[RMDB]
RNA sequence: GGGAACGACUCGAGUAGAGUCGAAAACUUUCCGAUCGAGCGGCUGCGACAGGUCGCCGAACACGCCGAUGCCACCAUCAACGAUGUCGUGCUGGCCAUGUGCGGCGGGGCGUUACGUGCGUACCUGGCCAGUCCAAUUGUUCGCAAUUGGACUGGCAAAAGAAACAACAACAACAAC
Reactivity to DMS in 0.01 (KOAc 150mM, MgCl2 10mM, bicine 150mM(pH8.5), 24C), signal-to-noise 2, nucleotides 027 to 126: c240u000u010u000c020c010g000a130u010c060g010a090g000c050g000g010c030u000g020c080g030a250c070a050g010g010u000c010g000c010c000g020a040a190c220a040c080g010c000c020g000a140u020g000c070c010a090c040c030a030u000c090a070a100c090g000a110u010g010u000c070g010u000g010c060u000g000g000c090c160a010u000g020u010g030c020g010g000c000g010g040g020g000c070g020u010u010a140c030g020u000g000c000g000u000a030c020c020u000g040
Reactivity to 2A3 in 0.01 (KOAc 150mM, MgCl2 10mM, bicine 150mM(pH8.5), 24C), signal-to-noise 2, nucleotides 027 to 126: c000u080u000u000c010c020g040a100u060c020g040a020g070c020g060g000c040u050g010c010g080a010c030a030g030g000u000c000g000c000c010g010a020a010c020a000c010g030c000c000g090a080u050g030c000c030a070c080c010a050u100c010a040a150c140g160a150u220g010u170c060g000u060g000c030u020g080g020c040c020a080u110g050u100g020c020g020g020c010g010g000g020g050c020g000u030u050a070c020g060u150g070c010g000u030a100c000c000u010g070

Chemical mapping of a 177-nucleotide RNA with DMS and 2A3. DMS adducts were read by reverse transcription with MarathonRT. Values cover nucleotides 27 to 126. It was measured as part of the RMDB library OK2TRN. 2A3 adducts were read by reverse transcription with SuperScript II with manganese.